[RMDB]
RNA sequence: GGGAACGACUCGAGUAGAGUCGAAAAUUCUAGGUGUACUGGGUGGCGACCGCGGCAUCGCUGAGGUGGUAACAUCCAAGCCUAUCCUGUACGAAAGUCUCAAAGACGAGUGGAAUAAGGUGCGACAGUACGUAGUCCACUUCGGUGGACUACGUACAAAAGAAACAACAACAACAAC
Reactivity to DMS in 0.01 (KOAc 150mM, MgCl2 10mM, bicine 150mM(pH8.5), 24C), signal-to-noise 2, nucleotides 027 to 126: u000u000c100u010a000g010g020u000g020u010a070c130u000g000g010g070u000g010g010c070g010a080c030c000g010c030g010g020c010a160u000c180g000c020u010g000a070g010g030u000g000g010u000a060a160c020a020u000c010c000a010a300g000c000c010u020a040u010c040c000u010g010u010a070c060g000a100a090a160g000u000c040u000c160a060a020a110g010a040c040g000a100g020u000g030g000a060a100u010a040a040g000g030u000g000c040g010a040c200a100
Reactivity to 2A3 in 0.01 (KOAc 150mM, MgCl2 10mM, bicine 150mM(pH8.5), 24C), signal-to-noise 1, nucleotides 027 to 126: u070u020c030u020a000g050g010u090g000u020a090c030u030g010g000g000u010g010g010c050g070a010c020c000g000c010g000g090c040a210u160c170g000c110u030g030a040g030g050u100g010g000u030a110a000c010a020u020c000c000a040a000g030c010c000u020a030u010c000c000u030g050u010a040c000g040a040a000a130g010u040c030u040c080a190a100a100g110a030c010g050a020g070u060g000g090a090a070u100a160a060g080g000u010g040c020g010a030c000a020